[RMDB]
RNA sequence: GGGAACGACUCGAGUAGAGUCGAAAAAACACUGUGUAGGAUAGGUGGGAGGCUUUGAAGUGUGGACGCCAGUCUGCUUGGAGCCGACCUUGAAAUACCACCCUUUAAUGAAGAAAAACAAAGCCAAGAAGUUAUUCUUCUUCGGAAGAAUAACUUCAAAAGAAACAACAACAACAAC
Reactivity to 2A3 in 0.01 (KOAc 150mM, MgCl2 10mM, bicine 150mM(pH8.5), 24C), signal-to-noise 1, nucleotides 027 to 126: a020a000c080a030c040u100g010u020g020u060a030g000g040a020u000a030g000g050u070g090g080g010a120g050g000c040u070u110u060g130a060a040g060u060g070u140g130g010a010c000g060c120c020a010g000u000c000u030g030c000u090u100g000g040a030g000c030c010g030a020c030c000u000u020g000a050a020a000u050a010c000c010a020c000c020c030u000u060u120a140a130u290g120a090a130g040a050a270a000a000a010c030a010a100a070g090c080c020a020a040
Reactivity to DMS in 0.01 (KOAc 150mM, MgCl2 10mM, bicine 150mM(pH8.5), 24C), signal-to-noise 2, nucleotides 027 to 126: a030a040c150a040c080u000g010u000g020u010a020g010g000a100u000a020g020g010u000g000g030g020a240g000g010c000u010u010u020g000a020a050g010u020g020u030g020g010a000c010g000c180c210a120g000u000c000u000g000c030u020u010g000g000a020g000c010c000g000a050c150c050u000u000g000a030a050a080u000a040c000c000a050c010c010c020u010u000u010a070a070u000g010a080a090g000a080a050a050a050a090c040a080a080a070g010c040c100a060a120